[RMDB]
RNA sequence: GGGAACGACUCGAGUAGAGUCGAAAAUGACCGAGGCCAGCUACAAGGCAGGCGCUCGCUACGAUCGCGCGCUCGACGCGAUGCACCACAAGGCUGGCGACAAGAAGCUCUGGCUGAGCCGCAGCGUGUCGGUUUGGGGGAUGAGCACCGACGAGGCCCAUACAAGUUGAUUCGUCAACUUGUAUGGAAAAGAAACAACAACAACAAC
Reactivity to 2A3 in 0.01 (KOAc 150mM, MgCl2 10mM, bicine 150mM(pH8.5), 24C), signal-to-noise 6, nucleotides 027 to 156: u130g050a030c030c010g040a060g030g010c000c010a000g020c030u080a070c100a180a110g100g010c040a060g040g020c040g040c020u030c020g010c020u090a090c110g060a070u050c010g000c010g000c010g020c050u060c070g080a090c010g000c000g030a020u080g030c040a060c070c010a050c050a110a070g030g000c020u020g020g010c010g010a040c020a020a030g090a070a030g010c010u010c050u120g060g010c020u060g020a020g020c010c030g010c040a030g030c030g040u100g060u060c020g020g000u060u150u200g040g000g000g010g020a030u110g030a030g020c040a020c020c010g010a020c020g030a070g030g030c010
Reactivity to DMS in 0.01 (KOAc 150mM, MgCl2 10mM, bicine 150mM(pH8.5), 24C), signal-to-noise 2, nucleotides 027 to 156: u010g000a120c010c000g010a170g020g030c000c010a050g050c030u000a160c100a160a110g010g030c040a110g000g010c010g010c040u000c070g000c050u000a050c150g000a080u000c020g040c030g030c020g010c130u010c110g020a100c040g030c010g000a050u000g020c080a100c000c030a080c090a080a190g000g030c020u000g040g010c020g030a140c060a080a130g010a170a090g000c020u000c040u010g020g050c040u000g000a090g000c020c020g000c030a060g030c090g040u010g010u000c010g010g010u000u000u010g030g020g010g010g020a110u000g020a160g020c050a030c020c000g010a050c000g000a110g020g020c110